[RMDB]
RNA sequence: GGGAACGACUCGAGUAGAGUCGAAAAAAGUAAUGAAGUAGCCGAAGAAGACUUAGCAAUGGUUGAUGCAAGUGUUGACGGAGUACUAGGAAAACUUUUAAUUGAUUCUUGUAGUAACCUAAGCAUCCGUAGGUAUUUAAUUCGUUAAAUACCUACGAAAAGAAACAACAACAACAAC
Reactivity to 2A3 in 0.01 (KOAc 150mM, MgCl2 10mM, bicine 150mM(pH8.5), 24C), signal-to-noise 4, nucleotides 027 to 126: a000a010g110u110a050a050u110g020a080a020g030u050a020g010c030c040g040a040a020g070a090a010g030a040c030u090u040a010g000c010a060a070u120g110g040u080u090g040a020u030g000c010a010a020g000u030g030u060u030g010a010c040g020g000a030g050u040a040c060u070a070g090g100a060a100a050a020c020u050u070u040u100a120a210u060u050g010a010u040u030c000u020u020g010u000a030g010u010a020a020c010c010u030a070a010g010c010a020u090c040
Reactivity to DMS in 0.01 (KOAc 150mM, MgCl2 10mM, bicine 150mM(pH8.5), 24C), signal-to-noise 6, nucleotides 027 to 126: a060a040g000u010a060a090u020g010a090a070g010u000a060g010c020c020g010a070a120g010a090a080g010a040c050u010u000a090g020c030a040a090u000g000g010u000u010g010a120u000g010c020a040a020g020u000g010u000u010g010a190c070g000g000a050g000u000a030c070u000a130g010g010a080a100a060a040c050u000u000u010u000a070a140u010u010g000a060u000u000c010u000u000g010u010a030g010u000a040a040c020c020u000a070a190g010c070a070u000c120
This 177-nucleotide RNA was probed chemically with 2A3 and DMS. High DMS reactivity at an A or C suggests that its Watson-Crick edge is free. Values cover nucleotides 27 to 126. 2A3 adducts were read by reverse transcription with SuperScript II with manganese. The data come from the RNA Mapping Database (RMDB), library OK2TST. Conditions: 150 mM KOAc, 10 mM MgCl2 and 150 mM bicine (pH 8.5), 24 C.